[RMDB]
RNA sequence: GGGAACGACUCGAGUAGAGUCGAAAAGAUAUGGAUCAUGUGUAGACAUGACGGAUCACUCGGAAACGAGUGGGCACGUCAACAGCUACACCGCUGAUCCUAAGUCAAAGCCCAUCUUCGGAUGGGCGUGUAAGCGACUCUUCGGAGUCGCUUACACAAAAGAAACAACAACAACAAC
Reactivity to 2A3 in 0.01 (KOAc 150mM, MgCl2 10mM, bicine 150mM(pH8.5), 24C), signal-to-noise 2, nucleotides 027 to 126: g050a000u070a040u170g020g000a000u010c000a050u190g030u000g000u020a000g070a090c070a080u120g010a000c040g030g000a030u060c000a000c000u030c020g000g100a160a130a000c010g000a010g030u060g000g000g000c300a100c120g020u000c010a030a060c070a110g120c000u010a000c000a000c020c000g040c050u010g000a010u000c000c000u020a070a020g040u000c070a130a190a050g000c000c000c010a010u020c020u070u080c300g150g010a010u000g000g000g040c020
Reactivity to DMS in 0.01 (KOAc 150mM, MgCl2 10mM, bicine 150mM(pH8.5), 24C), signal-to-noise 2, nucleotides 027 to 126: g000a020u010a300u000g000g010a020u000c000a000u020g000u000g000u000a000g000a100c100a300u000g010a020c000g030g030a110u010c000a000c010u010c000g000g010a130a110a300c010g000a040g010u000g010g000g060c190a210c000g020u010c000a030a140c270a130g020c000u000a040c000a020c030c000g000c010u000g000a010u000c000c000u000a000a080g000u000c020a180a130a170g000c020c000c000a000u000c000u010u000c230g010g020a020u000g010g020g000c000